[RMDB]
RNA sequence: GGGAACGACUCGAGUAGAGUCGAAAAAGUGGAUUUUCCUUGCAGUACCUUCUGCAAGUGGCAGAUAUUGGACAUCUUACAGCCCAAUAAUGAAACCAGGUAAUAACCAUGUUAAAAUUCCAGCUUCCCACUAUGGGGUAUUCGUACCCCAUAGUGGAAAAGAAACAACAACAACAAC
Reactivity to DMS in 0.01 (KOAc 150mM, MgCl2 10mM, bicine 150mM(pH8.5), 24C), signal-to-noise 2, nucleotides 027 to 126: a120g020u010g020g000a100u010u000u000u010c060c010u000u000g020c000a030g010u000a200c260c170u020u010c020u000g010c020a010a020g010u010g010g020c060a060g010a160u000a030u000u000g000g020a020c010a060u020c170u020u010a130c300a130g000c040c010c000a000a030u000a050a070u000g020a100a130a120c040c110a060g000g000u000a140a070u020a070a080c020c020a080u000g010u000u020a030a030a040a160u010u000c020c000a100g000c110u000u000c040